[RMDB]
RNA sequence: GGGAACGACUCGAGUAGAGUCGAAAAAUCAGUGGGCUAAGCCCAGACUUUUGAGAAGUAGAGAUACCUCUCAGCCCCUCCACCUUGGAGUGCCCUAUUCGGAGCACUGCAGUUCCCGAUAGAAAGGGAUCUUGUAUGUGUUCGCACAUACAAGAUCAAAAGAAACAACAACAACAAC
Reactivity to 2A3 in 0.01 (KOAc 150mM, MgCl2 10mM, bicine 150mM(pH8.5), 24C), signal-to-noise 2, nucleotides 027 to 126: a000u090c070a050g160u090g030g010g020c110u210a180a010g000c070c040c000a040g050a100c040u110u200u070u030g020a030g010a050a000g000u010a010g010a030g000a090u020a030c000c000u000c000u020c000a030g000c000c000c000c000u010c020c000a050c020c000u040u050g030g020a000g000u000g000c000c000c040u130a250u120u240c120g030g000a090g010c010a020c000u030g060c020a000g000u000u000c000c000c000g020a050u040a080g120a000a070a010g100g090
Reactivity to DMS in 0.01 (KOAc 150mM, MgCl2 10mM, bicine 150mM(pH8.5), 24C), signal-to-noise 3, nucleotides 027 to 126: a050u000c060a110g010u000g010g000g000c010u030a100a150g010c000c000c010a060g010a060c140u000u000u000u000g000a000g010a010a010g010u000a000g000a300g000a260u000a020c000c010u000c000u000c000a030g000c000c000c000c010u000c010c010a130c110c110u000u000g010g000a030g010u000g010c010c010c010u010a230u000u020c170g010g020a100g000c010a000c000u000g000c000a060g010u000u000c000c000c000g020a200u000a060g010a090a060a170g000g020
The record gives the reactivity of an RNA of 177 nucleotides to 2A3 and DMS. DMS adducts were read by reverse transcription with MarathonRT. 2A3 adducts were read by reverse transcription with SuperScript II with manganese. It was measured as part of the RMDB library VIROID. For 2A3, 1,497 sequencing reads were counted. The reactions ran in a buffer of 150 mM KOAc, 10 mM MgCl2 and 150 mM bicine (pH 8.5), at 24 C.